RNA sequence: GGGAACGACUCGAGUAGAGUCGAAAAAGGGGGUAGCUUUCCUCGUAAAUCCAGCUGCAAAACUCUAGUUGCCAACGACGACAACUACGCUCUGGCCGCUUAAGGCCUAAGCCUCGAAACCGCUUGUGUCCAUGCUCGCGGUGUAGAGUCACUAUCACCAUGAAUUCUAGUUCGCUAGAAUUCAUGGAAAAGAAACAACAACAACAAC
Reactivity to 2A3 in 0.01 (KOAc 150mM, MgCl2 10mM, bicine 150mM(pH8.5), 24C), signal-to-noise 4, nucleotides 027 to 156: a000g050g000g010g000g010u020a010g030c030u070u060u080c010c040u060c010g050u060a080a080a020u040c020c020a040g020c040u070g030c060a050a040a020a170c060u100c040u050a030g030u020u010g020c030c020a110a060c110g110a030c030g020a050c020a050a010c040u060a040c060g010c060u040c030u050g000g010c000c000g050c080u270u300a130a050g010g000c010c000u030a080a000g020c000c000u030c010g060a110a000a000c000c000g010c020u010u020g010u030g060u120c060c030a090u250g010c000u000c010g000c000g010g030u000g000u010a000g000a000g000u010c010a020c030u130a110u180c040a020
Reactivity to DMS in 0.01 (KOAc 150mM, MgCl2 10mM, bicine 150mM(pH8.5), 24C), signal-to-noise 2, nucleotides 027 to 156: a070g010g000g020g000g060u000a080g010c080u020u000u000c010c000u000c040g020u010a060a110a100u000c030c000a050g020c040u000g000c050a080a040a070a090c060u010c090u000a050g000u010u000g010c020c000a090a160c200g010a230c000g000a030c010a000a060c000u000a050c030g010c010u000c050u010g000g010c000c020g000c200u000u000a080a130g010g020c000c000u000a020a030g020c060c020u000c010g000a150a240a100c020c010g020c020u030u000g030u000g030u020c190c120a120u010g000c020u000c100g030c040g000g020u010g040u000a140g000a060g010u000c070a100c100u000a150u000c080a240
This 207-nucleotide RNA was probed chemically with 2A3 and DMS. It was measured as part of the RMDB library ARCHII. High DMS reactivity at an A or C suggests that its Watson-Crick edge is free.